[RMDB]
RNA sequence: GGGAACGACUCGAGUAGAGUCGAAAAGAUAUGGAGCGACCGUUUCGCAUUGUUCAGGAGUCCCACAGUCGGAAACGACUGUGAACCUCCUGAACAAUGAACUACGAAACAGGUCGCUCCUAAGUCACUUACUCCUUAUGUUCGCAUAAGGAGUAAGAAAAGAAACAACAACAACAAC
Reactivity to 2A3 in 0.01 (KOAc 150mM, MgCl2 10mM, bicine 150mM(pH8.5), 24C), signal-to-noise 2, nucleotides 027 to 126: g030a010u090a040u190g000g000a000g010c000g020a000c010c000g010u020u010u010c030g000c020a000u010u000g010u010u000c000a000g000g030a010g080u150c030c050c010a000c010a000g020u010c010g000g000a080a100a050c010g010a010c020u010g010u000g010a010a010c010c000u000c000c000u000g010a000a000c000a000a000u010g000a000a000c030u200a040c040g000a020a000a000c080a030g010g000u000c000g000c000u010c000c010u010a000a000g000u000c000a000
Reactivity to DMS in 0.01 (KOAc 150mM, MgCl2 10mM, bicine 150mM(pH8.5), 24C), signal-to-noise 6, nucleotides 027 to 126: g010a030u000a300u010g000g010a010g020c000g010a010c010c000g020u000u000u000c000g020c010a020u010u000g000u000u000c000a020g000g000a030g000u000c220c210c020a000c000a010g010u010c010g010g000a180a110a260c000g010a020c000u000g020u000g010a080a190c250c020u000c010c000u000g000a000a000c010a000a010u000g000a090a080c200u010a300c020g000a010a010a010c010a110g050g010u000c000g000c000u010c000c000u000a010a080g010u000c040a200
Notes:
Conditions: 150 mM KOAc, 10 mM MgCl2 and 150 mM bicine (pH 8.5), 24 C. Structure probing data (2A3 and DMS) for a 177-nucleotide construct. For DMS the reverse transcriptase was MarathonRT. For 2A3 the reverse transcriptase was SuperScript II with manganese. High 2A3 reactivity points to a flexible backbone, as in loops and unpaired stretches.